RNA sequence: GGGAACGACUCGAGUAGAGUCGAAAAGAAAGAAAGAUGUAUCAGUGGACGAAAGAUACAUACGAUCUUACAUCUUCAAAAUGGUAUGUAAGCUCGUUUUAGUAUCUUUCGUCUCUGAUCACAUUAACGACUACGAAGUCUUCGGACUUCGUAGUCGAAAAGAAACAACAACAACAAC
Reactivity to 2A3 in 0.01 (KOAc 150mM, MgCl2 10mM, bicine 150mM(pH8.5), 24C), signal-to-noise 2, nucleotides 027 to 126: g120a010a070a010g120a070a070a010g130a030u010g000u000a010u000c000a000g050u100g150g070a000c000g000a010a000a030g010a000u020a010c000a000u020a000c010g000a000u000c000u000u000a000c000a000u010c010u230u050c050a090a110a100a150u170g100g050u260a010u020g000u000a000a000g010c010u000c000g010u000u080u000u240a000g000u020a000u000c000u010u000u010c000g000u000c000u030c000u000g000a000u000c010a000c000a000u060u030a070a030